[RMDB]
RNA sequence: GGGAACGACUCGAGUAGAGUCGAAAACUCAACUUCGGUUGAGGGGCGACCUUUGUGAAAGCCAGGGUAGGGAGAAUAUAGGUCUCCCAUUGGGAGACAUAUAUUCAUCGAUCUACUAUUGGGCUUUCACUCUGGUGUAAAUUCCAUUCGUGGAAAAAGCUGCAAUAUUAUUCGUAAUAUUGCAGCUAAAAGAAACAACAACAACAAC
Reactivity to 2A3 in 0.01 (KOAc 150mM, MgCl2 10mM, bicine 150mM(pH8.5), 24C), signal-to-noise 3, nucleotides 027 to 156: c010u000c000a000a000c020u090u080c300g150g010u010u000g000a010g010g020g070g000c040g080a020c010c000u000u000u000g000u000g000a000a000a010g000c010c010a030g070g000g000u010a000g010g040g000a030g010a010a000u000a000u000a020g020g000u000c010u000c010c020c030a080u150u300g000g000g000a000g000a010c040a000u010a000u000a000u010u020c020a050u300c010g030a050u000c000u000a010c020u070a260u180u110g100g050g010c000u010u000u000c000a000c000u000c000u000g020g010u000g020u010a070a180a100u030u000c000c000a010u120u110c170g100u160g000g060a090a040a000a100
Reactivity to DMS in 0.01 (KOAc 150mM, MgCl2 10mM, bicine 150mM(pH8.5), 24C), signal-to-noise 1, nucleotides 027 to 156: c010u000c010a000a020c010u000u000c290g040g020u000u000g000a020g020g000g000g020c050g030a080c010c010u020u010u000g000u000g000a040a020a050g030c020c010a060g010g010g030u000a050g010g000g000a100g010a060a020u000a020u000a020g000g000u000c000u000c000c000c010a070u000u010g010g040g000a030g000a050c020a020u000a000u000a040u000u000c000a190u000c130g000a060u010c010u000a030c010u000a150u010u010g030g020g000c000u000u010u000c010a020c000u000c000u000g010g000u000g000u000a040a050a160u000u000c000c010a100u010u010c230g020u000g020g000a010a070a110a170